This 177-nucleotide RNA was probed chemically with DMS and 2A3.
[RMDB]
RNA sequence: GGGAACGACUCGAGUAGAGUCGAAAAGAUAUGGAGACGAACGACGACGAAGUAAGCUACCCACCUCGGAAACGAGAGGCUUACAGAGUCGGGAGUCUCCUAAGUCAAAGCCUAGUUCGCUAGGCAAGAGUAUGAACAUCUUCGGAUGUUCAUACUCAAAAGAAACAACAACAACAAC
Reactivity to DMS in 0.01 (KOAc 150mM, MgCl2 10mM, bicine 150mM(pH8.5), 24C), signal-to-noise 3, nucleotides 027 to 126: g000a100u000a300u000g000g000a000g010a030c000g040a300a290c040g000a060c010g000a200c170g010a210a100g000u000a000a010g000c000u000a120c190c100c220a300c130c030u040c020g000g020a130a020a150c000g020a010g050a120g000g000c000u000u000a020c010a010g000a220g020u000c000g000g000g000a300g000u010c000u000c000c000u010a010a070g000u000c030a060a150a130g000c000c000u000a010g000u000u000c270g030c030u010a010g000g050c010a080a020
Reactivity to 2A3 in 0.01 (KOAc 150mM, MgCl2 10mM, bicine 150mM(pH8.5), 24C), signal-to-noise 2, nucleotides 027 to 126: g000a000u040a030u140g000g000a000g000a010c000g000a090a000c000g040a000c030g160a030c020g000a060a020g000u020a010a000g000c000u060a110c050c060c050a190c120c020u000c010g020g000a070a040a030c010g000a000g020a010g030g040c010u010u000a000c010a010g010a020g040u000c000g010g010g000a020g010u000c000u000c000c010u010a070a010g010u000c020a080a070a020g000c000c000u010a020g000u020u080c300g020c140u010a000g000g070c000a010a010
2A3 adducts were read by reverse transcription with SuperScript II with manganese.
Conditions: 150 mM KOAc, 10 mM MgCl2 and 150 mM bicine (pH 8.5), 24 C.
Source: RMDB library TTRDEL, as collected in RNAgym.